[RMDB]
Structure probing data (2A3 and DMS) for a 177-nucleotide construct.

RNA sequence: GGGAACGACUCGAGUAGAGUCGAAAAACCAUUCAUCGAUUUGAUUGGAAUGUUAGUUAUGUAAUGGCUAAUCCUGAUGGUAUUUAUCCUCGAAGAAUGAUUGGAAUUAAUAAUCAAUGGCCUAAUCCGUUACAAGCAACUUCGGUUGCUUGUAACGAAAAGAAACAACAACAACAAC
Reactivity to 2A3 in 0.01 (KOAc 150mM, MgCl2 10mM, bicine 150mM(pH8.5), 24C), signal-to-noise 2, nucleotides 027 to 126: a010c060c010a050u080u030c030a000u030c040g300a280u010u030u250g110a100u030u110g080g070a050a080u070g030u050u070a030g000u020u030a020u130g140u070a180a000u130g050g000c010u000a050a050u080c000c050u080g030a110u170g010g000u020a130u060u220u030a080u130c040c050u010c020g110a110a020g050a110a090u150g060a080u070u090g000g000a090a070u140u070a020a030u140a030a050u080c050a010a000u070g050g030c010c000u040a080a050u010c070
Reactivity to DMS in 0.01 (KOAc 150mM, MgCl2 10mM, bicine 150mM(pH8.5), 24C), signal-to-noise 2, nucleotides 027 to 126: a070c000c000a050u000u000c050a030u000c210g010a150u000u020u010g000a040u010u000g000g000a150a170u000g000u000u000a020g040u000u000a030u010g030u020a110a040u000g010g020c000u000a040a030u000c040c100u000g020a100u000g030g010u000a090u000u010u020a070u010c000c030u000c110g000a100a060g030a080a050u030g000a070u000u000g020g000a200a050u040u010a050a100u000a050a060u020c050a030a080u000g010g000c100c010u010a070a070u020c100
It was measured as part of the RMDB library OK2TST. For DMS the reverse transcriptase was MarathonRT. For 2A3 the reverse transcriptase was SuperScript II with manganese. For 2A3, 715 sequencing reads were counted.